Structure probing data (2A3 and DMS) for a 207-nucleotide construct. For 2A3, 1,361 sequencing reads were counted. For 2A3 the reverse transcriptase was SuperScript II with manganese.
RNA sequence: GGGAACGACUCGAGUAGAGUCGAAAACAAAUGACUAAACAGAACCUGUUACAGAGCCCUGCCUGGACGACCUGCCAUCCUGGUCCUCCCAAAGCAGAUAUGUAAAUGAGCUUUGGCCUUGCAGCCCUGCAUGUAAAUGAACGCACUCAGCAGGACAUAAAAUAAAUUAGUUCGCUAAUUUAUUUUAAAAAGAAACAACAACAACAAC
Reactivity to 2A3 in 0.01 (KOAc 150mM, MgCl2 10mM, bicine 150mM(pH8.5), 24C), signal-to-noise 2, nucleotides 027 to 156: c040a010a100a120u170g050a030c030u150a050a100a030c020a040g080a060a090c030c000u040g060u130u070a110c060a040g060a060g030c020c010c000u020g010c030c020u020g010g020a010c010g010a030c000c030u040g000c020c020a060u080c020c020u020g030g020u020c000c030u060c000c010c010a030a030a010g000c020a010g060a170u140a070u140g130u120a050a100a090u080g030a030g000c000u030u030u030g010g000c000c030u020u040g010c040a020g020c010c000c000u000g040c010a040u030g030u120a040a110a060u110g070a070a020c050g020c040a020c030u120c060a030g000c020a010g000g010a000c000a020
Reactivity to DMS in 0.01 (KOAc 150mM, MgCl2 10mM, bicine 150mM(pH8.5), 24C), signal-to-noise 2, nucleotides 027 to 156: c050a080a100a120u030g020a170c020u000a110a060a130c020a130g000a120a120c010c010u000g030u000u000a110c060a100g000a200g030c010c030c020u000g020c040c060u020g020g010a070c050g000a070c020c030u000g020c010c030a050u000c030c030u000g000g040u020c010c040u000c050c020c000a040a070a080g000c010a050g000a120u000a050u000g000u010a020a070a120u000g000a220g020c030u000u000u000g010g010c070c050u010u000g010c040a080g000c030c010c010u000g000c020a120u000g000u000a030a060a090u020g010a060a120c040g010c130a030c050u000c020a090g030c000a040g030g030a060c000a250
Overview
The reactions ran in a buffer of 150 mM KOAc, 10 mM MgCl2 and 150 mM bicine (pH 8.5), at 24 C. For DMS, 3,548 sequencing reads were counted.